[RMDB]
Structure probing data (2A3 and DMS) for a 177-nucleotide construct. DMS adducts were read by reverse transcription with MarathonRT. For 2A3 the reverse transcriptase was SuperScript II with manganese.

RNA sequence: GGGAACGACUCGAGUAGAGUCGAAAACGUGCGGAUGAAGCCGUCCUUCUCCAGCUUGACGUUGCUCUGAGCUGCGGCCCAUUCGUCGUAGCUCGGGUAGAGGUGCUGGUCGUCACCCUCGAUGACGGUGAAGCGCUUAAUUCGUUAAGCGCUUCACAAAAGAAACAACAACAACAAC
Reactivity to 2A3 in 0.01 (KOAc 150mM, MgCl2 10mM, bicine 150mM(pH8.5), 24C), signal-to-noise 1, nucleotides 027 to 126: c020g060u110g010c030g040g020a130u140g110a060a040g030c010c000g050u080c000c000u060u030c010u060c000c000a000g020c000u100u180g130a060c070g070u000u030g000c000u000c060u170g000a000g000c000u000g000c000g000g000c000c000c070a150u200u260c150g010u000c000g030u000a000g010c010u000c010g000g000g000u010a030g030a000g030g000u100g040c020u030g050g000u050c000g060u010c020a130c060c040c020u110c130g170a110u120g000a000c030g020
Reactivity to DMS in 0.01 (KOAc 150mM, MgCl2 10mM, bicine 150mM(pH8.5), 24C), signal-to-noise 1, nucleotides 027 to 126: c080g030u020g030c040g020g010a100u020g010a140a170g000c000c040g010u010c030c080u000u000c050u000c020c040a050g010c020u000u000g000a080c040g020u000u010g010c010u000c010u010g000a010g020c000u000g000c000g000g010c010c190c210a190u010u010c240g030u000c010g000u000a010g010c000u000c010g000g000g000u000a020g000a070g010g010u010g010c050u000g010g010u000c020g010u010c060a050c060c040c090u000c090g000a100u000g010a070c030g030